[RMDB]
RNA sequence: GGGAACGACUCGAGUAGAGUCGAAAACACCCUGGCAGCGGCUCCGGCUCACAAAGUCGAAGCGAAAGACGCGAACGAUCUCCCGGUCGAUAACCGCCAGGGCGUGAUCACCGUGUCCGCAGCCCACGGCCUGGUCGCUGGUGAUGCCUUCACCAUCGAAAGUGACACUAUUCGUAGUGUCACUUUCAAAAGAAACAACAACAACAAC
Reactivity to 2A3 in 0.01 (KOAc 150mM, MgCl2 10mM, bicine 150mM(pH8.5), 24C), signal-to-noise 3, nucleotides 027 to 156: c040a040c010c000c010u010g030g000c070a060g030c000g040g000c020u000c020c030g000g020c030u050c050a120c040a050a180a010g020u030c020g000a030a000g020c030g050a090a120a010g090a030c050g010c020g040a090a050c040g020a010u020c030u060c070c030c010g000g020u050c030g050a080u100a170a100c080c080g000c010c020a050g000g020g000c010g040u050g000a010u030c000a010c110c030g010u000g010u010c060c090g060c160a030g010c040c000c000a030c040g000g010c020c000u020g010g000u030c030g020c070u050g000g030u010g000a040u150g130c010c000u040u080c030a030c000c040a080u080c040
Reactivity to DMS in 0.01 (KOAc 150mM, MgCl2 10mM, bicine 150mM(pH8.5), 24C), signal-to-noise 1, nucleotides 027 to 156: c050a000c010c000c010u010g050g000c000a090g000c020g000g020c010u000c000c010g050g020c000u000c060a110c300a100a180a060g020u000c000g020a040a050g030c010g020a060a190a100g000a100c060g000c060g000a100a220c050g000a200u000c040u000c020c050c050g060g030u010c020g010a180u000a150a060c040c000g000c030c030a040g000g030g030c000g000u010g020a080u000c020a130c050c000g020u000g040u010c030c030g000c070a130g020c000c090c000a030c020g010g000c010c070u000g050g070u000c000g000c100u040g000g000u020g010a080u000g000c060c020u000u010c040a070c050c040a160u000c140